This 177-nucleotide RNA was probed chemically with 2A3 and DMS. High DMS reactivity at an A or C suggests that its Watson-Crick edge is free. The DMS profile rests on 4,852 reads. 2A3 adducts were read by reverse transcription with SuperScript II with manganese. For 2A3, 4,584 sequencing reads were counted.
RNA sequence: GGGAACGACUCGAGUAGAGUCGAAAACUUUCUCUCCCAGGGAAGAUACCCCAGUGCCAUGUCUUGGGGCAAGAGAAAAUGAAGACAGACCUGGAACAUGAACAUGGUGGCCUUGCCAGAAAGCAAGUCCACGUGUUAGAUUCGUCUAACACGUGGAAAAAGAAACAACAACAACAAC
Reactivity to 2A3 in 0.01 (KOAc 150mM, MgCl2 10mM, bicine 150mM(pH8.5), 24C), signal-to-noise 3, nucleotides 027 to 126: c010u000u050u010c020u000c010u000c040c010c010a010g030g010g000a100a040g040a120u150a090c000c000c010c020a020g040u030g050c010c020a030u020g020u030c020u030u060g010g000g010g020c050a060a010g040a000g070a100a070a020a070u220g070a100a030g060a030c050a020g040a040c010c010u000g020g050a070a050c050a110u110g010a020a010c010a010u020g010g000u010g030g020c010c000u000u010g010c020c000a090g200a090a030a010g000c010a010a000g060
Reactivity to DMS in 0.01 (KOAc 150mM, MgCl2 10mM, bicine 150mM(pH8.5), 24C), signal-to-noise 5, nucleotides 027 to 126: c080u000u000u000c010u000c030u000c030c010c010a130g000g000g000a110a070g000a150u000a100c030c000c000c040a060g010u000g000c020c030a050u000g010u000c010u000u010g010g010g010g020c110a050a040g010a090g010a040a010a070a100u000g000a140a070g010a110c140a080g000a130c030c000u000g000g000a090a110c120a090u010g010a140a030c040a030u000g010g020u000g010g010c090c010u000u000g000c000c060a150g010a100a100a100g000c030a000a030g010